[RMDB]
Chemical mapping of a 177-nucleotide RNA with 2A3 and DMS. The 2A3 profile rests on 811 reads. The DMS profile rests on 995 reads. The RNA was probed in 150 mM KOAc, 10 mM MgCl2 and 150 mM bicine (pH 8.5) at 24 C. It was measured as part of the RMDB library OK2TRN.
RNA sequence: GGGAACGACUCGAGUAGAGUCGAAAAGAUGAGAUCAAGAGAGGCGGGGGUCAGGCCGUUGCCAACUACGACUCUGUCGAGUUCGGUGACAAAAUUAUCCAGACGGCCAUCGAUGCCUUCGGAAGGGACGCUCAUGUCAAUUCGUUGACAUGAGCGUAAAAGAAACAACAACAACAAC
Reactivity to 2A3 in 0.01 (KOAc 150mM, MgCl2 10mM, bicine 150mM(pH8.5), 24C), signal-to-noise 1, nucleotides 027 to 126: g090a030u190g050a030g010a080u060c030a040a140g080a030g000a010g050g000c060g020g000g000g000g030u000c060a030g000g100c000c000g000u010u080g120c000c010a090a000c030u300a190c070g060a010c000u050c170u300g000u000c000g000a020g010u050u020c060g000g090u000g060a060c050a030a100a020a080u200u170a020u080c070c050a030g010a050c020g000g000c000c000a050u080c010g010a050u120g000c010c010u000u000c040g000g040a010a020g050g020g020
Reactivity to DMS in 0.01 (KOAc 150mM, MgCl2 10mM, bicine 150mM(pH8.5), 24C), signal-to-noise 2, nucleotides 027 to 126: g010a080u000g000a040g000a140u000c040a050a100g000a140g000a110g000g000c060g000g000g000g000g000u010c070a060g000g000c100c110g000u010u000g010c010c010a040a020c020u000a170c030g000a030c010u000c160u000g000u000c020g010a060g000u000u000c090g050g060u000g010a080c080a070a050a080a050u020u020a100u000c050c040a180g010a100c180g020g000c010c060a120u020c190g030a120u000g000c060c030u010u010c090g010g010a040a090g000g000g000